Structure probing data (DMS and 2A3) for a 207-nucleotide construct. The reactions ran in a buffer of 150 mM KOAc, 10 mM MgCl2 and 150 mM bicine (pH 8.5), at 24 C. Source: RMDB library OK3TST, as collected in RNAgym.

RNA sequence: GGGAACGACUCGAGUAGAGUCGAAAAGGAGGAAGGAUGUCGAAACCGAGAGGUCCUGAGGAAUCGCUUUUUAGAGUUUGACUAACAGAUUGUGUUAGUAUAUAAAUGCCGCUUAUAUAACUCUUCAGAAACCUCAGGCGACAGUGAAGCGGCAUGACGAUCUAGUAUAAUUCGUUAUACUAGAUCGAAAAGAAACAACAACAACAAC
Reactivity to DMS in 0.01 (KOAc 150mM, MgCl2 10mM, bicine 150mM(pH8.5), 24C), signal-to-noise 4, nucleotides 027 to 156: g000g010a060g010g010a070a070g020g010a090u010g030u010c020g020a070a090a120c040c030g010a160g020a140g020g010u000c010c000u000g010a070g010g010a060a230u010c050g020c160u000u010u010u010u010a050g010a060g010u020u000u010g010a080c020u000a010a020c010a080g010a230u000u000g030u000g010u000u000a020g020u000a100u000a040u000a020a010a100u000g010c020c010g010c020u000u010a060u000a060u000a040a040c010u000c000u000u000c110a120g000a060a030a280c020c010u000c020a020g000g000c050g000a050c050a060g010u000g020a070a010g020c010g030g010c020a010u000g000a130
Reactivity to 2A3 in 0.01 (KOAc 150mM, MgCl2 10mM, bicine 150mM(pH8.5), 24C), signal-to-noise 6, nucleotides 027 to 156: g020g010a010g010g020a050a020g030g020a040u050g020u070c030g050a100a030a060c030c010g010a030g010a020g040g030u040c000c000u000g000a000g010g020a020a040u060c030g040c060u200u120u030u050u100a010g000a000g000u030u040u150g050a010c010u010a000a010c010a080g160a300u210u200g080u010g000u070u010a000g000u000a020u010a000u000a060a020a020u010g000c000c000g000c000u010u000a010u000a000u000a080a010c000u000c000u080u060c030a030g030a030a020a010c000c000u010c000a000g000g010c000g010a010c010a010g060u060g090a020a000g000c000g000g000c000a000u010g010a000